[RMDB]
RNA sequence: GGGAACGACUCGAGUAGAGUCGAAAACGACCUCCUGACGGGUCGGACAUAGCGUCAGGAUCAUCCGUGGCAGUCACCACGGUAAUCAUGUGUCUGAUGAUGGUUUUCCAUCUUAAUCUGACUGCGUCGUAGCAGUCUACAGUACUAUGACAUUAGAAUUACUGCCAGUCUUCGGACUGGCAGUAAUAAAAGAAACAACAACAACAAC
Reactivity to 2A3 in 0.01 (KOAc 150mM, MgCl2 10mM, bicine 150mM(pH8.5), 24C), signal-to-noise 1, nucleotides 027 to 156: c040g010a010c000c000u000c020c000u000g000a010c010g030g010g030u010c010g060g150a040c050a060u140a070g010c030g000u000c000a000g000g020a040u160c040a050u000c020c000g040u000g060g030c080a120g080u100c060a060c030c000a000c000g000g000u000a000a020u070c020a000u070g020u000g230u110c030u080g060a080u090g000a000u030g020g000u080u120u300u010c000c010a010u040c000u040u170a090a090u110c100u030g000a000c000u000g010c010g060u090c070g000u030a010g010c000a000g010u060c000u000a000c000a010g000u020a070c030u060a020u070g000a020c000a060u100u180a110g040a100
Conditions: 150 mM KOAc, 10 mM MgCl2 and 150 mM bicine (pH 8.5), 24 C. The record gives the reactivity of an RNA of 207 nucleotides to 2A3. The 2A3 profile rests on 640 reads. Source: RMDB library OK3TST, as collected in RNAgym. Reactivities are given for positions 27 through 156.